Background: An RNA of 170 nucleotides, treated with DMS and 2A3 and read out base by base. The DMS profile rests on 13,897 reads.
[RMDB]
RNA sequence: GGGAACGACUCGAGUAGAGUCGAAAAUGCUAUUAAUGUUGGUGGUACAGGAUUACAGUAUGCCGCCAUUACUGCACCUUAUGUAGUUCUCACUGGCUUAGGUGAGUCCUUUAAGAAAGUUGCAACCGUACACAUCCCUUCGGGGAUGUGAAAAGAAACAACAACAACAAC
Reactivity to DMS in 0.01 (KOAc 150mM, MgCl2 10mM, bicine 150mM(pH8.5), 24C), signal-to-noise 5, nucleotides 027 to 129: u060g030c050u020a080u000u000a040a070u020g000u020u030g050g050u030g000g080u060a050c130a090g010g080a080u060u060a150c130a120g000u020a020u040g020c070c020g010c060c030a030u000u000a040c110u010g050c040a050c100c040u000u000a120u060g050u050a080g000u020u020c020u010c000a040c000u000g030g020c210u030u030a030g060g010u000g030a020g000u000c000c000u000u030u060a070a090g020a080a070a050g070u070u010g010c040a020a280c060c000g000u040a130
Reactivity to 2A3 in 0.01 (KOAc 150mM, MgCl2 10mM, bicine 150mM(pH8.5), 24C), signal-to-noise 5, nucleotides 027 to 129: u140g040c010u050a060u080u080a220a120u080g050u080u020g020g030u020g060g000u000a040c070a050g030g080a180u090u200a090c000a030g070u120a060u030g010c000c000g000c000c000a010u050u040a050c040u010g040c000a050c040c010u060u050a100u180g150u030a040g010u060u000c010u000c000a000c000u020g180g070c080u200u140a080g000g010u000g010a000g030u070c010c010u080u080u050a120a030g060a100a150a000g020u040u030g010c020a010a030c020c010g010u070a020
Reactivities are rounded to 0.1 and cut off at 0 and 3.